Structure probing data (DMS) for a 177-nucleotide construct. DMS adducts were read by reverse transcription with MarathonRT. The reactions ran in a buffer of 150 mM KOAc, 10 mM MgCl2 and 150 mM bicine (pH 8.5), at 24 C.

[RMDB]
RNA sequence: GGGAACGACUCGAGUAGAGUCGAAAAUUUGUAGUUCUCCUUGAAGAGGUCCUUCACGUCCCUUGUAAGUUGGAUUCCUAGGUAUUUUAUUCUCUUAGAAGCAGUUGUGAAUGGGAGUUCACUCAUGCGCUGAUGAUACUUUCGAGUAUCAUCAGCGAAAAGAAACAACAACAACAAC
Reactivity to DMS in 0.01 (KOAc 150mM, MgCl2 10mM, bicine 150mM(pH8.5), 24C), signal-to-noise 1, nucleotides 027 to 126: u000u010u010g020u000a100g030u000u000c020u000c020c030u000u000g010a090a070g000a190g010g020u000c050c030u010u000c080a070c040g000u000c010c040c010u000u010g010u020a050a050g000u020u010g040g010a110u010u020c040c020u020a070g010g010u000a030u000u000u000u000a100u030u000c030u000c050u000u000a030g010a020a070g000c110a080g000u000u000g010u020g020a050a070u010g040g020g000a150g020u000u000c040a040c010u000c120a050u000g000